This 177-nucleotide RNA was probed chemically with 2A3 and DMS. For DMS, 1,166 sequencing reads were counted. For 2A3 the reverse transcriptase was SuperScript II with manganese. DMS (dimethyl sulfate) methylates the pairing face of unpaired adenines and cytosines. Conditions: 150 mM KOAc, 10 mM MgCl2 and 150 mM bicine (pH 8.5), 24 C.
RNA sequence: GGGAACGACUCGAGUAGAGUCGAAAAAUUACGGGCGGCGCAGGUGGAGCUGGGAUCCCUCCGCCCAUCGCGUGCUCUCUCGGUGGCCCAGACGCUGCAAACGGACAGGCGGGCCACCUGCAACGAAGUUGAAGAAGAGCUUCGGCUCUUCUUCAACAAAAGAAACAACAACAACAAC
Reactivity to 2A3 in 0.01 (KOAc 150mM, MgCl2 10mM, bicine 150mM(pH8.5), 24C), signal-to-noise 2, nucleotides 027 to 126: a000u120u050a080c090g010g000g060c060g030g020c000g010c060a120g000g010u010g000g050a230g040c050u230g030g010g030a120u150c080c020c000u010c020c010g010c030c000c010a030u020c000g010c000g030u030g000c000u000c010u030c010u000c070g010g000u000g010g000c010c000c050a130g000a090c100g040c130u030g000c050a130a240a290c040g080g120a120c020a000g010g040c000g000g000g000c000c010a000c000c010u020g010c010a040a060c010g100a120a020
Reactivity to DMS in 0.01 (KOAc 150mM, MgCl2 10mM, bicine 150mM(pH8.5), 24C), signal-to-noise 2, nucleotides 027 to 126: a100u030u000a110c110g000g050g000c050g040g020c030g020c170a070g020g010u000g010g020a060g040c060u010g030g010g040a100u010c170c130c060u020c030c020g000c000c010c030a000u000c040g010c020g000u000g020c020u000c020u000c030u010c030g020g020u000g020g010c010c000c010a130g040a150c150g020c030u010g000c040a090a080a140c290g000g010a200c050a030g000g030c040g000g010g010c010c010a010c010c010u000g000c140a010a100c120g010a050a110